[RMDB]
RNA sequence: GGGAACGACUCGAGUAGAGUCGAAAAGCACUACAUGGCGGACCGUCUCCUGGGCGUGGUCUCGAGCUGGCUGGAGGGGGCCGUGCUGGAGCAGAUCGGUCCCUGCUUCCCCAACCGCCUCCCCCAGGAUAGCUCAUCGAUUCGUCGAUGAGCUAUCAAAAGAAACAACAACAACAAC
Reactivity to DMS in 0.01 (KOAc 150mM, MgCl2 10mM, bicine 150mM(pH8.5), 24C), signal-to-noise 2, nucleotides 027 to 126: g010c030a060c110u000a100c210a130u020g000g020c080g010g010a180c030c020g030u000c060u000c050c040u000g000g000g000c060g050u000g020g000u000c030u000c060g020a110g000c030u010g000g000c060u010g010g000a150g000g000g000g000g030c040c010g030u000g000c010u010g000g000a070g000c120a040g000a070u010c050g030g000u000c010c040c000u000g000c020u000u000c020c010c000c070a090a100c030c060g000c000c000u000c000c010c010c000c010a150g020
Reactivity to 2A3 in 0.01 (KOAc 150mM, MgCl2 10mM, bicine 150mM(pH8.5), 24C), signal-to-noise 2, nucleotides 027 to 126: g020c020a030c100u180a060c120a200u230g080g020c020g010g010a020c010c000g050u000c000u030c020c040u140g070g010g040c000g080u080g070g010u010c040u050c070g080a090g020c030u040g250g010c050u080g030g020a070g020g000g020g040g000c030c020g030u040g000c020u060g030g080a030g050c040a010g020a080u140c070g050g040u040c030c000c020u030g000c010u030u020c000c010c000c000a010a060c040c030g070c000c000u000c000c010c000c030c000a010g090

Chemical mapping of a 177-nucleotide RNA with DMS and 2A3. Reactivities are given for positions 27 through 126. The data come from the RNA Mapping Database (RMDB), library OK2TRN. The 2A3 profile rests on 2,087 reads. For 2A3 the reverse transcriptase was SuperScript II with manganese. The RNA was probed in 150 mM KOAc, 10 mM MgCl2 and 150 mM bicine (pH 8.5) at 24 C.